[RMDB]
RNA sequence: GGGAACGACUCGAGUAGAGUCGAAAAAUCGAGGCCGAUGGUGAACUGCAACGUUAUAUAAACUAAAGUGCCAGAAUAAAAAUAAAGAAAGGCAAAGGGAGACUAUCCGUCUUCGAAACAAGUCAAACGAUAAUAAUGCUUUCGAGCAUUAUUAUCGAAAAGAAACAACAACAACAAC
Reactivity to 2A3 in 0.01 (KOAc 150mM, MgCl2 10mM, bicine 150mM(pH8.5), 24C), signal-to-noise 6, nucleotides 027 to 126: a000u070c020g000a030g050g000c010c020g010a030u040g020g010u010g040a080a020c030u030g030c050a060a030c040g010u040u040a140u040a040u100a260a120a020c050u060a100a130a070g070u030g040c010c000a000g060a040a030u270a050a080a040a020a000u190a030a090a020g130a080a040a010g000g000c000a040a040a030g080g020g000a070g030a020c010u040a050u060c030c030g000u010c000u050u020c030g020a020a040a040c040a050a070g090u150c090a120a030a020
Reactivity to DMS in 0.01 (KOAc 150mM, MgCl2 10mM, bicine 150mM(pH8.5), 24C), signal-to-noise 4, nucleotides 027 to 126: a100u000c040g010a070g010g000c010c100g000a050u020g000g020u000g010a110a120c000u000g010c130a080a130c140g000u020u020a090u040a140u040a040a030a050c050u030a060a130a090g010u010g010c000c000a050g020a090a090u030a010a050a110a090a100u060a080a100a150g000a070a110a060g000g000c000a040a120a090g010g000g000a110g010a020c030u010a060u000c120c120g000u000c000u010u000c010g020a030a100a070c220a040a070g010u020c090a040a050a230